Chemical mapping of a 177-nucleotide RNA with DMS and 2A3. Reactivities are given for positions 27 through 126.
RNA sequence: GGGAACGACUCGAGUAGAGUCGAAAACGGCGUGAGAACGGCAGCCGAAAUUAUCAACCUGAUGAAAACUCAGCAGGAAGAAGCCGUUAUUACCGCCGUGCGUGAAUUCGACGGCGAGCUGGCGCAACACUACGUGCUAGUUCGCUAGCACGUAGUGAAAAGAAACAACAACAACAAC
Reactivity to DMS in 0.01 (KOAc 150mM, MgCl2 10mM, bicine 150mM(pH8.5), 24C), signal-to-noise 6, nucleotides 027 to 126: c020g000g010c010g030u000g000a080g000a020a040c000g000g000c010a130g030c130c150g010a080a080a080u010u010a090u010c030a040a300c040c000u020g000a040u000g000a040a110a140a130c300u000c010a030g000c010a030g000g010a070a210g010a070a100g000c020c000g000u000u000a060u000u000a060c290c030g020c000c000g000u010g000c080g010u010g010a060a090u010u000c080g010a090c070g010g010c020g000a030g000c020u000g010g010c020g030c100a080a140
Reactivity to 2A3 in 0.01 (KOAc 150mM, MgCl2 10mM, bicine 150mM(pH8.5), 24C), signal-to-noise 1, nucleotides 027 to 126: c000g020g000c010g010u050g030a070g020a010a000c000g000g000c020a030g070c060c090g060a060a040a050u280u150a140u070c010a010a040c000c010u020g000a040u020g030a030a110a120a160c120u020c040a000g010c000a000g060g000a040a060g040a070a010g020c000c000g010u000u030a040u050u030a010c010c040g000c000c000g010u030g040c020g010u100g100a180a190u100u050c020g050a020c030g030g030c030g010a030g000c020u030g030g000c040g000c030a030a060
For DMS, 5,059 sequencing reads were counted. For 2A3, 5,001 sequencing reads were counted.